The record gives the reactivity of an RNA of 177 nucleotides to DMS. DMS adducts were read by reverse transcription with MarathonRT. For DMS, 1,027 sequencing reads were counted. Conditions: 150 mM KOAc, 10 mM MgCl2 and 150 mM bicine (pH 8.5), 24 C.
RNA sequence: GGGAACGACUCGAGUAGAGUCGAAAACUACCGGGUGGACAAGGUGGCCUCCGUGUUGAAGGUCAACAUGCCGAGCCCGAGGCUGGUCGUCGAGGAGCUGAGGAGGCUCGGGUAUCGCGCCACGCUAUCCUAGGCCAGUGUUCGCACUGGCCUAGGAAAAAGAAACAACAACAACAAC
Reactivity to DMS in 0.01 (KOAc 150mM, MgCl2 10mM, bicine 150mM(pH8.5), 24C), signal-to-noise 1, nucleotides 027 to 126: c060u000a170c070c070g020g020g050u000g000g010a040c060a050a090g000g020u000g010g010c000c000u010c030c030g010u000g010u020u040g020a130a050g010g030u010c010a010a060c070a140u000g000c000c020g000a090g000c020c010c000g010a230g000g020c000u000g050g010u000c040g000u010c160g010a120g000g000a040g010c020u000g000a300g010g010a230g010g000c010u000c010g000g000g000u010a020u000c100g000c180g010c020c020a000c040g040c120u030a140